About this RNA:
This 207-nucleotide RNA was probed chemically with 2A3. It was measured as part of the RMDB library OK3TST.

RNA sequence: GGGAACGACUCGAGUAGAGUCGAAAAUACACCUCGCCCUGCUCGGGCAUCAGCUGGAAGGCGGACUUCAGGUCGCUCUCCACGCGGUACCGCUCCAUCAGCAGCGUCAUGACUUCCAUGCCCUUCUCCCAGGCCGAAACGAUCGGCAGGCUCAGGGUCCAAUGUCAUCUUUCGAGAUGACAUUGGAAAAAGAAACAACAACAACAAC
Reactivity to 2A3 in 0.01 (KOAc 150mM, MgCl2 10mM, bicine 150mM(pH8.5), 24C), signal-to-noise 2, nucleotides 027 to 156: u080a020c030a050c020c050u080c030g000c000c010c000u050g000c000u010c120g070g000g000c050a030u070c090a020g030c000u020g100g020a060a020g140g220c110g050g060a030c010u100u110c210a210g110g000u020c000g010c030u090c010u000c020c010a060c130g050c050g050g000u030a030c000c140g000c000u060c010c080a200u180c040a030g030c010a030g010c030g050u040c030a040u070g110a080c030u040u000c030c020a080u100g000c020c010c030u060u030c060u120c010c010c070a040g160g000c010c010g030a150a160a190c070g070a270u060c030g000g030c010a040g010g050c030u000c060a050g020g000g050
The reactions ran in a buffer of 150 mM KOAc, 10 mM MgCl2 and 150 mM bicine (pH 8.5), at 24 C.
The 2A3 profile rests on 796 reads.